[RMDB]
RNA sequence: GGGAACGACUCGAGUAGAGUCGAAAACGAAGCGCGGCCCUCUUCCAGAGUACCCACGAGCAGACCCAGCUCACCACGAACGAUGGUGCGGCGCUCGAAGUUGGCGUUCCAGCUGGUCAGCGGGAUGUGCUUCUACUAGAUUCGUCUAGUAGAAGCAAAAAGAAACAACAACAACAAC
Reactivity to DMS in 0.01 (KOAc 150mM, MgCl2 10mM, bicine 150mM(pH8.5), 24C), signal-to-noise 8, nucleotides 027 to 126: c090g000a100a080g020c060g010c050g020g000c020c030c030u000c030u000u000c040c070a120g000a130g020u010a090c040c020c040a150c120g010a060g010c050a100g010a160c040c020c020a150g010c010u000c010a080c020c030a050c070g010a090a080c210g000a090u000g010g010u000g020c110g010g000c010g010c010u010c030g000a060a090g020u000u010g000g010c080g010u000u000c020c020a070g010c030u000g010g000u010c060a060g010c040g000g000g010a090u010g010
Reactivity to 2A3 in 0.01 (KOAc 150mM, MgCl2 10mM, bicine 150mM(pH8.5), 24C), signal-to-noise 3, nucleotides 027 to 126: c010g060a070a020g060c020g010c030g060g030c010c000c010u000c020u050u020c020c030a020g030a030g180u080a080c010c010c000a030c060g010a020g030c040a010g040a140c020c020c000a000g000c010u010c020a010c010c010a030c030g190a300a020c090g090a110u060g050g000u230g210c060g050g000c040g000c020u000c010g040a120a040g080u130u130g040g010c020g000u010u070c020c000a010g000c020u010g030g080u080c060a000g040c020g000g020g010a040u080g050

Conditions: 150 mM KOAc, 10 mM MgCl2 and 150 mM bicine (pH 8.5), 24 C. Structure probing data (DMS and 2A3) for a 177-nucleotide construct. For DMS the reverse transcriptase was MarathonRT. Reactivities are given for positions 27 through 126. 2A3 adducts were read by reverse transcription with SuperScript II with manganese. Source: RMDB library OK2TRN, as collected in RNAgym.